[RMDB]
RNA sequence: GGGAACGACUCGAGUAGAGUCGAAAAGGGGUCCUCGAUGAGCCAGGCAAAGCUUGGAUUUAUAGUGCUGAAGCCUCCACGGCACUAUUGUCAGCUUUGUAUUGGGCUCUAAGAGGACGGAGGCACCCAAAUCAUAACAUGUUCGCAUGUUAUGAAACUAAUAUUUAUUCUUCGGAAUAAAUAUUAGAAAAGAAACAACAACAACAAC
Reactivity to 2A3 in 0.01 (KOAc 150mM, MgCl2 10mM, bicine 150mM(pH8.5), 24C), signal-to-noise 4, nucleotides 027 to 156: g080g000g030g020u010c010c000u000c010g030a120u210g000a010g010c070c100a190g180g000c030a010a010a010g000c040u190u290g140g010a020u050u300u040a040u020a000g000u000g000c000u020g040a170a030g010c000c010u010c000c000a020c000g000g000c000a000c000u000a000u000u030g040u040c030a000g000c000u040u010u000g010u030a210u070u250g100g000g000c030u000c000u000a010a000g000a000g000g000a000c000g000g000a000g000g000c000a030c000c000c000a050a090a050u030c000a000u000a000a000c000a000u000g040u060u090c280g000c140a000u010g000u020u000a000u000g000a050a000a000
Reactivity to DMS in 0.01 (KOAc 150mM, MgCl2 10mM, bicine 150mM(pH8.5), 24C), signal-to-noise 2, nucleotides 027 to 156: g000g000g040g030u000c010c000u000c010g000a240u010g020a000g010c000c000a120g010g000c000a000a010a020g010c010u000u000g050g010a090u000u000u000a030u000a040g000u000g010c000u000g000a070a160g020c010c000u000c000c020a300c040g000g010c000a010c000u000a010u000u000g000u000c040a070g010c010u000u000u000g010u000a100u010u010g020g030g050c000u000c010u010a050a180g010a030g020g020a020c000g000g020a040g040g060c030a090c000c010c030a090a070a190u000c000a010u000a000a020c000a010u000g000u000u010c300g020c010a010u000g000u000u000a000u010g000a020a110a250